This 177-nucleotide RNA was probed chemically with DMS and 2A3. 2A3 adducts were read by reverse transcription with SuperScript II with manganese. For DMS, 1,530 sequencing reads were counted. The data come from the RNA Mapping Database (RMDB), library RFMREP. Values cover nucleotides 27 to 126.

[RMDB]
RNA sequence: GGGAACGACUCGAGUAGAGUCGAAAACAUGCCCUUAGCUCCACGAGUAGGAAUGUCUGAAAGUGCAUUCUGAAUGGGUGAUAAGAUUCAUCCAAGGCUAAAUAUAAGUUAGGAGAUCGAUAGCAUACAUCGUUAUCUUCUUCGGAAGAUAACGAUGAAAAGAAACAACAACAACAAC
Reactivity to DMS in 0.01 (KOAc 150mM, MgCl2 10mM, bicine 150mM(pH8.5), 24C), signal-to-noise 2, nucleotides 027 to 126: c160a140u010g000c050c000c040u000u000a050g030c010u000c050c050a130c210g000a030g000u000a130g000g020a030a020u000g020u000c100u010g000a130a080a140g040u020g010c010a010u000u000c010u000g000a140a160u000g000g010g010u010g000a010u020a090a140g010a120u020u000c030a020u000c000c000a060a100g010g020c030u000a040a080a050u010a090u000a060a040g020u000u000a060g020g000a030g000a060u010c050g030a110u000a100g000c060a090u010a150
Reactivity to 2A3 in 0.01 (KOAc 150mM, MgCl2 10mM, bicine 150mM(pH8.5), 24C), signal-to-noise 3, nucleotides 027 to 126: c010a060u130g030c010c030c010u030u060a020g010c010u000c040c050a110c060g030a010g010u000a000g000g000a030a020u000g020u000c050u100g160a280a070a060g100u080g000c010a000u050u000c000u020g040a100a030u050g040g000g000u000g000a000u040a100a160g140a080u040u040c000a010u010c010c000a020a010g040g000c010u030a030a120a020u230a070u040a000a060g080u080u150a040g020g050a060g020a100u080c020g060a050u060a090g060c020a010u060a170